[RMDB]
RNA sequence: GGGAACGACUCGAGUAGAGUCGAAAAGAUAUGGAUCAACUACGGCAACGUAGGUCUCGAUAAGCUGCAUUCGGAAACGAAUGGCAGCUUUUGACGAGGCUACGUUGCCGUAGUUGAUCCUAAGUCACUGUAGCUUAUUCUUCGGAAUAAGCUACAGAAAAGAAACAACAACAACAAC
Reactivity to DMS in 0.01 (KOAc 150mM, MgCl2 10mM, bicine 150mM(pH8.5), 24C), signal-to-noise 2, nucleotides 027 to 126: g010a060u000a300u000g000g000a010u000c000a000a020c000u000a000c030g000g000c010a000a010c000g000u010a040g060g020u010c010u000c010g040a170u010a020a000g000c010u000g000c010a060u000u010c000g000g000a110a120a200c010g010a030a010u000g010g000c010a000g000c010u000u000u010u010g010a170c200g000a010g000g000c000u000a000c000g020u000u000g000c000c000g010u000a000g000u000u010g010a010u000c000c000u000a020a070g010u000c030a160
An RNA of 177 nucleotides, treated with DMS and read out base by base. The data come from the RNA Mapping Database (RMDB), library TTRINS. Conditions: 150 mM KOAc, 10 mM MgCl2 and 150 mM bicine (pH 8.5), 24 C. For DMS the reverse transcriptase was MarathonRT. The DMS profile rests on 2,638 reads.